[RMDB]
RNA sequence: GGGAACGACUCGAGUAGAGUCGAAAAACUGCCUGUUUCGACAGGCAGUAGUCUACUUCGCGCAACCGCCGAGUCGUUCCCGCGGUUGCGUGUAGUAGUUUGAUAUGAUCUUAUUCGUAAGAUCAAAUGUCCAGAUCUUAUUCGUAAGAUCUGGACAAAAAGAAACAACAACAACAAC
Reactivity to DMS in 0.01 (KOAc 150mM, MgCl2 10mM, bicine 150mM(pH8.5), 24C), signal-to-noise 1, nucleotides 027 to 126: a000c010u000g000c000c000u010g010u000u000u000c170g000a080c010a010g000g010c000a010g000u000a020g010u010c010u000a000c020u000u000c000g010c000g010c000a000a010c000c000g020c010c250g000a170g000u000c000g010u000u010c000c010c010g020c010g000g010u000u000g000c000g080u000g020u010a000g010u000a010g000u010u010u010g020a160u000a130u010g010a020u000c000u000u000a040u000u020c160g000u020a010a000g000a010u000c000a040a080a110